[RMDB]
Source: RMDB library OK1LIB, as collected in RNAgym. Structure probing data (2A3 and DMS) for a 177-nucleotide construct. The DMS profile rests on 2,983 reads. For DMS the reverse transcriptase was MarathonRT. The reactions ran in a buffer of 150 mM KOAc, 10 mM MgCl2 and 150 mM bicine (pH 8.5), at 24 C. The 2A3 profile rests on 2,655 reads.
RNA sequence: GGGAACGACUCGAGUAGAGUCGAAAAGAAUGUAUGUAAAGAAAGCGGCACACAUUGGCUGCCCAGAAAUAAAACUGGGACAACAGGUGAAAUGGACGCAAGCCAAAUCCUUAGCAUAAGAAAGAAAACCGUACUACUGAUUCGUCAGUAGUACGGUAAAAGAAACAACAACAACAAC
Reactivity to 2A3 in 0.01 (KOAc 150mM, MgCl2 10mM, bicine 150mM(pH8.5), 24C), signal-to-noise 3, nucleotides 027 to 126: g090a080a050u110g000u070a020u040g020u070a040a110a040g020a060a120a000g030c060g010g000c020a030c010a000c010a130u050u080g040g000c010u030g000c000c000c000a010g060a030a130a030u260a010a070a000a040c000u000g000g000g040a030c010a100a000c020a080g090g000u080g090a140a020a020u050g020g000a030c050g040c160a040a030g020c010c030a010a030a060u100c010c000u010u080a010g000c000a020u050a120a080g120a150a080a010g110a010a120a030
Reactivity to DMS in 0.01 (KOAc 150mM, MgCl2 10mM, bicine 150mM(pH8.5), 24C), signal-to-noise 3, nucleotides 027 to 126: g040a100a020u050g040u000a050u000g000u020a090a070a080g000a010a160a060g040c280g010g040c020a080c040a070c030a050u040u010g000g000c030u010g080c010c000c000a000g010a070a080a120u040a100a080a150a110c000u000g020g000g010a080c070a060a250c040a040g000g000u030g000a100a030a110u000g000g030a080c210g000c130a050a070g030c020c000a010a200a090u000c000c010u000u010a110g020c010a030u020a000a060g010a080a070a090g000a050a050a050